[RMDB]
RNA sequence: GGGAACGACUCGAGUAGAGUCGAAAACUCAUUGCGUUCGCGCAAUGAGGGUCAGUCCUAAGUCGAACGAGGGACAUGAGGCGUGUCGGAAACGACACCCUCAACAGCCUCCCCACCGUUCGAUAUGGAAGCGUUUGUUUGGAUUCGUCCAAACAAAACGUGGGAGAAUAUUCGUAUUCUCCCACGUAAAAGAAACAACAACAACAAC
Reactivity to 2A3 in 0.01 (KOAc 150mM, MgCl2 10mM, bicine 150mM(pH8.5), 24C), signal-to-noise 3, nucleotides 027 to 156: c000u000c000a000u000u010g010c030g040u050u060c300g010c000g000c140a000a000u000g010a010g050g010g040u130c080a050g110u000c010c000u040a130a070g020u000c000g000a000a000c000g000a060g000g000g000a010c020a030u050g010a000g080g070c220g030u010g010u000c000g010g050a100a120a120c010g010a000c000a000c010c000c000u000c000a010a050c040a010g040c000c040u040c000c000c000c020a100c040c000g000u000u000c000g000a000u000a050u060g030g020a090a100g080c110g100u050u030u010g000u010u000u000g010g010a010u030u030c220g040u020c060c000a000a000a000c000a020a030a000
Reactivity to DMS in 0.01 (KOAc 150mM, MgCl2 10mM, bicine 150mM(pH8.5), 24C), signal-to-noise 2, nucleotides 027 to 156: c000u000c000a010u000u010g000c000g030u010u010c230g050c040g040c000a000a020u020g010a020g000g000g010u000c090a110g000u000c010c000u000a110a300g030u000c000g010a030a040c000g000a090g010g020g020a080c030a300u000g020a020g030g000c170g080u000g000u000c000g030g000a210a130a200c010g020a000c000a000c000c000c000u000c000a010a030c120a090g040c050c020u000c010c000c000c000a190c270c010g040u000u020c010g000a030u000a210u010g000g000a060a110g000c060g000u000u000u000g010u000u010u000g020g000a100u000u010c300g010u000c000c000a010a000a030c000a020a020a020
Structure probing data (2A3 and DMS) for a 207-nucleotide construct. The RNA was probed in 150 mM KOAc, 10 mM MgCl2 and 150 mM bicine (pH 8.5) at 24 C. The DMS profile rests on 4,411 reads. As a SHAPE reagent, 2A3 marks flexible, mostly unpaired nucleotides at the ribose 2'-OH. For DMS the reverse transcriptase was MarathonRT.